[RMDB]
RNA sequence: GGGAACGACUCGAGUAGAGUCGAAAACGAGCGCAGUGUUGCGCGAGACUCUAGGCCCGUGACAUGUUACGGACAAAUUCCGUGACCGUGUUAAGGCCAGCAUUGAAGAGCGUACCUAGCUGCGUUUCAACCUGCAUGGGUUGGGGCGGCUUAGCGGGUCUCUAAAGACCUUCGGGUCUUUAGAGACAAAAGAAACAACAACAACAAC
Reactivity to 2A3 in 0.01 (KOAc 150mM, MgCl2 10mM, bicine 150mM(pH8.5), 24C), signal-to-noise 1, nucleotides 027 to 156: c110g050a070g010c000g000c000a080g160u180g120u300u160g050c020g000c020g000a040g000a000c000u020c000u040a040g000g040c030c010c020g070u160g020a000c000a000u000g000u000u000a000c000g010g000a030c110a170a290a290u300u000c000c030g000u000g010a010c080c070g030u000g010u000u000a020a000g020g000c000c000a000g000c080a090u110u240g060a090a010g020a000g000c010g000u020a130c010c000u000a010g070c000u040g050c030g080u010u050u050c010a000a000c000c020u020g000c150a250u230g000g010g000u000u000g010g000g040g000c030g000g020c000u080u040a090g070c250g000g210
The record gives the reactivity of an RNA of 207 nucleotides to 2A3. The RNA was probed in 150 mM KOAc, 10 mM MgCl2 and 150 mM bicine (pH 8.5) at 24 C. Source: RMDB library VIROID, as collected in RNAgym. For 2A3, 427 sequencing reads were counted.